This 177-nucleotide RNA was probed chemically with DMS and 2A3.
For DMS, 26,741 sequencing reads were counted.
Source: RMDB library OK2TST, as collected in RNAgym.
Reactivities are given for positions 27 through 126.
For 2A3, 20,703 sequencing reads were counted.
Reactivities are rounded to 0.1 and cut off at 0 and 3.
The reactions ran in a buffer of 150 mM KOAc, 10 mM MgCl2 and 150 mM bicine (pH 8.5), at 24 C.
RNA sequence: GGGAACGACUCGAGUAGAGUCGAAAAUGAAGGCAGCCAGGAGGAGCACCUUAUUUUGCUCUACGCGUUGGGGAUCAUUGCGGUGAUGACGCUUUUCAACUCCUUAAGCAACCAUGCGGUAGGGCGGCUUACAGAAUUUAUUCGUAAAUUCUGUAAGAAAAGAAACAACAACAACAAC
Reactivity to DMS in 0.01 (KOAc 150mM, MgCl2 10mM, bicine 150mM(pH8.5), 24C), signal-to-noise 9, nucleotides 027 to 126: u010g010a100a070g000g010c050a060g010c040c050a090g000g000a090g000g000a090g020c050a070c100c070u000u010a090u010u000u000u000g020c010u000c010u000a030c030g010c030g010u000u000g010g000g010g000a100u010c060a050u000u000g020c080g020g010u000g010a060u000g010a100c130g010c040u000u000u010u010c110a060a110c110u000c040c030u000u010a070a080g010c050a160a140c040c030a050u000g000c020g010g010u000a030g010g010g010c030g000g010
Reactivity to 2A3 in 0.01 (KOAc 150mM, MgCl2 10mM, bicine 150mM(pH8.5), 24C), signal-to-noise 8, nucleotides 027 to 126: u100g020a030a020g040g000c030a010g010c040c020a030g030g060a030g030g010a020g030c020a020c010c000u070u050a160u080u170u140u190g000c000u000c010u010a010c040g020c010g050u040u080g020g000g010g030a020u050c020a040u040u100g050c110g090g020u040g030a040u060g030a030c050g000c000u090u030u030u060c050a070a070c040u080c030c000u060u080a050a010g010c010a010a060c010c000a020u060g010c020g080g030u020a010g020g010g000c020g010g010